[RMDB]
RNA sequence: GGGAACGACUCGAGUAGAGUCGAAAAUUUGCAACUCCCUACGCCGGCAUUACCCGGUCAGGUUCGUACGGUCGACGGCCCCGAGCCGUCCUCUCAGCGCACUCGGCGUGCGCUCCCGCGUGGGUACUGGACCUAUACCAUUCGUGGUAUAGGUCCAAAAAGAAACAACAACAACAAC
Reactivity to 2A3 in 0.01 (KOAc 150mM, MgCl2 10mM, bicine 150mM(pH8.5), 24C), signal-to-noise 4, nucleotides 027 to 126: u090u040u180g030c040a050a050c090u070c010c030c000u000a010c010g040c010c010g000g040c100a100u050u280a120c000c040c000g000g000u000c070a010g010g070u040u030c000g010u040a040c010g020g040u030c020g020a020c010g010g020c000c030c030c040g000a030g020c010c000g020u020c000c020u010c010u010c020a020g000c000g010c020a000c010u140c100g300g000c140g030u000g000c000g000c010u040c000c000c000g120c060g000u240g000g010g000u000a040c040
Reactivity to DMS in 0.01 (KOAc 150mM, MgCl2 10mM, bicine 150mM(pH8.5), 24C), signal-to-noise 3, nucleotides 027 to 126: u010u040u030g010c170a070a070c070u000c000c000c020u010a120c220g000c010c030g000g010c200a110u030u040a050c280c010c040g000g030u000c050a070g020g000u030u020c100g000u030a080c110g040g020u000c300g030a080c090g000g000c020c050c120c230g010a150g000c030c040g000u000c000c000u000c030u020c120a040g010c030g010c030a010c060u020c180g000g000c100g000u000g020c020g000c000u010c020c040c060g000c070g000u060g030g020g000u000a040c160